Description
Structure probing data (2A3 and DMS) for a 207-nucleotide construct. The DMS profile rests on 1,909 reads.
[RMDB]
RNA sequence: GGGAACGACUCGAGUAGAGUCGAAAAUGGGCUACCAGUAAGCGAAAAAUGAUUCAGGACGAAAAAAACAUAAUUCGAGAUUUUUCAGGAUGGAUUUUUUUAGGUAUCUAUCAAAACUAUUCUGAUGCAACGUAGAGCACGUUCGCGUGCUCUACAAGUGAGUACUAAGGUUCGCCUUAGUACUCACAAAAGAAACAACAACAACAAC
Reactivity to 2A3 in 0.01 (KOAc 150mM, MgCl2 10mM, bicine 150mM(pH8.5), 24C), signal-to-noise 3, nucleotides 027 to 156: u060g030g000g000c010u040a030c040c020a040g050u130a060a020g010c020g080a090a030a020a020a010u120g010a110u060u090c050a010g080g030a030c030g040a040a040a000a050a020a040a020c070a070u170a080a050u150u050c020g030a010g030a220u100u160u110u100u080c000a000g010g000a000u000g020g010a020u030u010u000u000u000u000u040a030g040g020u180a110u210c010u010a030u020c010a010a010a000a000c010u010a010u010u030c010u000g010a010u050g050c030a060a070c140g000u000a000g000a010g000c000a000c010g030u050u060c090g020c000g040u010g000c000u000c000u000a000c000a000a000
Reactivity to DMS in 0.01 (KOAc 150mM, MgCl2 10mM, bicine 150mM(pH8.5), 24C), signal-to-noise 1, nucleotides 027 to 156: u000g040g050g010c020u040a080c040c010a120g050u020a120a090g000c030g030a000a090a060a110a090u020g010a150u000u000c010a050g010g010a190c040g010a000a000a010a080a080a070a120c050a040u010a110a180u000u000c060g010a160g010a100u000u000u010u000u000c010a050g010g020a010u100g010g000a010u030u020u030u030u030u030u030a010g010g030u020a040u010c020u010a060u000c020a010a030a030a060c010u010a050u000u010c010u020g010a020u000g050c080a060a130c080g000u000a040g010a030g010c000a000c000g040u010u000c270g020c020g030u000g000c000u000c000u000a010c010a030a060

Values cover nucleotides 27 to 156. It was measured as part of the RMDB library M2RFOK. The RNA was probed in 150 mM KOAc, 10 mM MgCl2 and 150 mM bicine (pH 8.5) at 24 C. DMS adducts were read by reverse transcription with MarathonRT.